[RMDB]
Structure probing data (DMS and 2A3) for a 177-nucleotide construct. The RNA was probed in 150 mM KOAc, 10 mM MgCl2 and 150 mM bicine (pH 8.5) at 24 C. For DMS, 42,756 sequencing reads were counted. Reactivities are given for positions 27 through 126. 2A3 adducts were read by reverse transcription with SuperScript II with manganese.

RNA sequence: GGGAACGACUCGAGUAGAGUCGAAAACGGUUUGUCCUGCCACUUUGUCGGGUUUGAUACCGGUUUUAUGCAGUUCUUCCGAGUGCGCGAAAAAGCCAUGACUAUCGCCGAGAUGCUUACCGGCGCGAAUACUGCUGUUAUUCGUAACAGCAGUAUUAAAAGAAACAACAACAACAAC
Reactivity to DMS in 0.01 (KOAc 150mM, MgCl2 10mM, bicine 150mM(pH8.5), 24C), signal-to-noise 9, nucleotides 027 to 126: c070g010g010u000u010u010g010u000c030c030u000g010c040c070a100c150u010u010u000g020u010c060g010g000g010u010u010u010g010a110u010a070c040c010g010g010u000u010u010u000a050u010g020c070a070g010u000u000c030u000u000c040c040g010a110g020u000g010c070g010c030g000a040a050a070a080a070g010c020c060a080u000g010a090c100u000a100u000c040g010c030c020g000a100g010a100u000g010c080u000u010a120c080c030g000g010c040g010c180g000
Reactivity to 2A3 in 0.01 (KOAc 150mM, MgCl2 10mM, bicine 150mM(pH8.5), 24C), signal-to-noise 8, nucleotides 027 to 126: c020g010g020u050u060u130g040u050c010c000u010g030c030c010a080c070u130u120u150g080u100c030g030g030g050u060u130u200g130a100u130a080c010c000g030g030u030u060u030u060a050u080g030c020a020g020u010u030c010u070u010c020c020g040a050g070u070g020c050g000c030g090a100a040a010a030a000g040c040c020a090u110g040a050c030u080a060u170c020g010c020c010g080a100g020a080u150g070c050u050u070a070c010c030g020g000c010g000c000g040